[RMDB]
RNA sequence: GGGAACGACUCGAGUAGAGUCGAAAAGACAUUCAAGAGCCGAUGCUGAAUGCCGCACAAGAGCAGUUUGGGGGUAAUCCAUUUGCCUCCGUGGGGAGUAGUUCCUCCUCUGGGGAAGGUACGCAGCCCCUUCCUACUGGUUCGCCAGUAGGAAGGGAAAAGAAACAACAACAACAAC
Reactivity to 2A3 in 0.01 (KOAc 150mM, MgCl2 10mM, bicine 150mM(pH8.5), 24C), signal-to-noise 1, nucleotides 027 to 126: g010a010c020a000u100u090c080a120a070g030a030g190c040c060g130a080u120g000c020u000g010a070a050u030g000c020c040g080c030a030c020a080a100g030a040g090c020a050g020u090u190u140g030g000g010g000g020u040a020a000u090c090c030a100u080u050u030g000c000c000u000c020c000g000u110g000g000g000g000a000g020u070a020g000u040u040c010c020u010c010c000u050c030u090g000g000g060g030a030a020g060g000u050a040c070g000c110a000g050c040
Reactivity to DMS in 0.01 (KOAc 150mM, MgCl2 10mM, bicine 150mM(pH8.5), 24C), signal-to-noise 2, nucleotides 027 to 126: g040a060c040a050u010u010c040a110a150g010a130g020c030c040g040a060u000g010c020u020g000a040a070u000g020c030c040g010c120a060c110a100a030g000a070g030c020a060g000u000u000u010g020g010g010g000g000u000a060a070u000c150c140a130u000u010u010g000c030c010u000c000c010g010u010g000g000g000g000a050g000u010a130g020u010u000c070c000u000c030c030u000c040u000g000g000g000g000a080a070g000g000u010a070c200g000c090a170g000c120
Structure probing data (2A3 and DMS) for a 177-nucleotide construct. The RNA was probed in 150 mM KOAc, 10 mM MgCl2 and 150 mM bicine (pH 8.5) at 24 C. Source: RMDB library OK2TRN, as collected in RNAgym. The DMS profile rests on 1,773 reads. 2A3 adducts were read by reverse transcription with SuperScript II with manganese. The 2A3 profile rests on 1,232 reads. High DMS reactivity at an A or C suggests that its Watson-Crick edge is free. For DMS the reverse transcriptase was MarathonRT.